[RMDB]
RNA sequence: GGGAACGACUCGAGUAGAGUCGAAAACGGCAAAAAAGCAAACUUGACCACCAAGGAUAAAAGAGAUCUUAUCCAAGGAUGCAAAAGAUAAUCUCACUUUUGACACCCACUGAUCUCGAACUUAAAGCCUAACACCAGAUUUCGAUCUGGUGUUAGGAAAAGAAACAACAACAACAAC
Reactivity to DMS in 0.01 (KOAc 150mM, MgCl2 10mM, bicine 150mM(pH8.5), 24C), signal-to-noise 3, nucleotides 027 to 126: c120g000g020c060a000a050a090a060a040a060g010c040a100a060a100c070u000u000g000a090c220c000a070c020c030a050a300g000g010a010u010a020a050a080a070g020a020g020a020u020c020u010u000a030u000c040c020a070a300g000g040a060u000g000c010a010a020a040a030g030a070u010a090a130u020c090u000c130a170c010u000u000u000u000g000a130c060a150c020c000c000a040c200u050g000a020u010c040u010c010g000a080a110c110u020u010a020a080a060g010
Reactivity to 2A3 in 0.01 (KOAc 150mM, MgCl2 10mM, bicine 150mM(pH8.5), 24C), signal-to-noise 8, nucleotides 027 to 126: c010g030g000c010a010a020a070a020a040a070g100c070a100a080a060c040u070u060g060a190c000c010a020c010c000a060a040g040g010a020u040a070a040a030a020g020a000g000a010u000c000u030u030a030u040c040c030a030a050g010g010a030u070g020c000a000a020a040a020g040a090u130a200a260u160c050u040c090a060c020u040u020u030u010g080a080c020a050c010c010c000a050c090u050g010a010u010c010u000c030g010a030a020c010u130u140a110a050a050g040